[RMDB]
RNA sequence: GGGAACGACUCGAGUAGAGUCGAAAAGUGUCCACUCCACUCAUUUAGGUAACUAAUGAUGCUGGAUGGACCUAAGCAAUGAAUACAACCAGACGAGGGAAGAAAUUCUGCAGUCGGGUAUUCACCAUGGGACGGCGGCGCUGGAUUACUCCCACGACAUCACAUCCUACUUCGGUAGGAUGUGAUGAAAAGAAACAACAACAACAAC
Reactivity to 2A3 in 0.01 (KOAc 150mM, MgCl2 10mM, bicine 150mM(pH8.5), 24C), signal-to-noise 2, nucleotides 027 to 156: g120u130g000u000c010c000a010c210u010c000c000a010c010u000c000a040u040u050u250a030g000g040u120a150a090c020u000a010a000u000g010a000u110g020c240u010g050g000a000u000g010g000a000c000c010u070a040a030g050c030a010a080u070g010a010a000u040a030c040a080a090c070c040a050g050a010c000g000a110g010g010g010a030a050g050a030a100a040u060u040c050u140g070c080a010g000u020c080g000g000g000u010a010u030u070c020a010c070c030a080u090g020g000g080a020c000g020g060c010g010g020c070g020c060u050g000g030a030u070u090a050c030u020c040c000c030a030c100g090a000